[RMDB]
RNA sequence: GGGAACGACUCGAGUAGAGUCGAAAAGUGUUAGCGUUCGCGCUAACACAAAGAACGCUGCAACGCGCAGCGCGCUCGCGAGAGCACGAAAGAGCGUUAAAAAAAGCUCGGGCUUCGGCCCGAGCAAGUGUAUUAAUAUCUUCGGAUAUUAAUACACAAAAGAAACAACAACAACAAC
Reactivity to 2A3 in 0.01 (KOAc 150mM, MgCl2 10mM, bicine 150mM(pH8.5), 24C), signal-to-noise 2, nucleotides 027 to 126: g000u010g000u000u010a010g010c000g010u030u030c260g010c000g000c100u000a000a000c010a000c000a000a020a010g040a080a010c010g000c000u010g040c030a120a090c100g020c000g000c090a000g010c000g000c030g000c000u010c010g000c030g030a070g000a010g130c020a020c060g090a100a070a000g070a020g010c010g010u020u020a130a190a030a000a040a000a010g000c000u010c000g050g010g020c020u070u050c280g100g010c050c010c010g000a000g000c000a000a000
Reactivity to DMS in 0.01 (KOAc 150mM, MgCl2 10mM, bicine 150mM(pH8.5), 24C), signal-to-noise 3, nucleotides 027 to 126: g010u000g000u000u000a000g010c000g050u000u010c240g020c000g010c000u000a000a010c010a000c010a040a090a110g000a110a150c050g010c040u010g020c040a070a050c060g050c050g020c010a030g010c010g030c070g000c010u000c010g010c300g010a260g000a020g020c010a040c140g010a070a050a060g000a060g010c010g000u000u010a000a000a130a190a120a130a130g020c000u000c000g030g000g000c010u000u010c220g040g010c000c020c000g010a010g010c010a000a040

This 177-nucleotide RNA was probed chemically with 2A3 and DMS. For 2A3 the reverse transcriptase was SuperScript II with manganese. Source: RMDB library M2PK50, as collected in RNAgym.